[RMDB]
RNA sequence: GGGAACGACUCGAGUAGAGUCGAAAAGAUAUGGAACCGCUAGUUCGAGGAUCUAUAAAGAGUGGGUCGGAAACGACCCAUAGGGAGAACAAACGGUUCCUAAGUCAAACUACACUUCGGUGUAGAACAAUGGAUACAUCUUCGGAUGUAUCCAUUGAAAAGAAACAACAACAACAAC
Reactivity to 2A3 in 0.01 (KOAc 150mM, MgCl2 10mM, bicine 150mM(pH8.5), 24C), signal-to-noise 3, nucleotides 027 to 126: g010a000u070a040u150g000g010a000a010c010c020g000c060u030a030g030u000u010c030g050a290g090g030a040u000c020u040a130u180a300a300a060g300a030g130u130g000g010g010u000c010g020g000a090a040a020c020g000a000c000c000c000a000u010a000g000g000g000a050g000a000a000c010a020a080a010c030g000g000u010u000c000c010u000a000a000g000u000c000a010a070a140c000u020a000c000a000c000u090u180c300g110g000u010g000u010a020g000a020a010
Reactivity to DMS in 0.01 (KOAc 150mM, MgCl2 10mM, bicine 150mM(pH8.5), 24C), signal-to-noise 4, nucleotides 027 to 126: g020a040u010a300u010g000g010a030a000c000c000g020c020u010a300g020u000u000c010g000a140g030g000a060u010c020u010a120u030a150a100a150g020a170g010u000g010g000g020u000c000g010g000a130a050a210c010g020a000c000c000c000a000u000a010g000g010g010a080g000a030a000c000a070a130a130c000g000g000u000u000c000c010u000a010a090g000u000c020a110a120a280c000u000a010c000a010c000u000u010c170g020g010u000g000u000a000g000a090a160
This 177-nucleotide RNA was probed chemically with 2A3 and DMS. DMS adducts were read by reverse transcription with MarathonRT. The reactions ran in a buffer of 150 mM KOAc, 10 mM MgCl2 and 150 mM bicine (pH 8.5), at 24 C. Source: RMDB library TTRDES, as collected in RNAgym. High DMS reactivity at an A or C suggests that its Watson-Crick edge is free. Values cover nucleotides 27 to 126.